[RMDB]
RNA sequence: GGGAACGACUCGAGUAGAGUCGAAAAAUACUGAACAUGAGAACUGUUUUUAAAAGUGUAGAGCACAACCGGCCGAGAAUAGCAAACGCCAGAUUCCUUUGUACGCAUAUCACGUAGCACUUUGACACUGUUCUGAUCUACCUCCACACACUUAGCACUUUGCUUUCUAGUUCGCUAGAAAGCAAAGAAAAGAAACAACAACAACAAC
Reactivity to 2A3 in 0.01 (KOAc 150mM, MgCl2 10mM, bicine 150mM(pH8.5), 24C), signal-to-noise 5, nucleotides 027 to 156: a010u090a030c050u030g020a030a010c030a060u110g030a040g030a080a040c040u060g080u030u060u070u110u160a140a100a030a010g030u050g010u050a060g020a030g050c030a020c030a110a120c030c010g030g010c030c000g060a060g040a090a060u060a080g030c040a110a050a060c060g010c020c010a030g030a110u060u070c020c000u100u080u120g080u070a040c030g000c070a030u060a020u210c020a020c070g020u030a020g020c020a010c020u030u040u040g040a030c020a010c100u040g020u080u010c010u030g030a050u020c030u060a030c030c000u030c060c010a030c000a000c000a020c100u070u110a010g030c060a010
Reactivity to DMS in 0.01 (KOAc 150mM, MgCl2 10mM, bicine 150mM(pH8.5), 24C), signal-to-noise 2, nucleotides 027 to 156: a090u010a190c040u010g010a040a080c100a040u010g000a130g020a060a090c050u010g010u020u030u000u000u000a050a090a080a110g010u000g010u000a070g000a100g030c060a080c030a040a080c040c000g020g020c030c000g000a130g000a050a100u000a060g020c060a070a050a090c090g010c040c020a050g020a170u010u000c010c030u000u000u040g020u010a020c010g010c060a120u000a120u000c100a040c060g030u010a120g010c030a020c040u010u010u000g010a060c080a050c050u000g000u010u010c030u000g010a070u000c050u000a090c090c010u000c000c020a040c030a030c040a060c040u000u000a100g020c060a180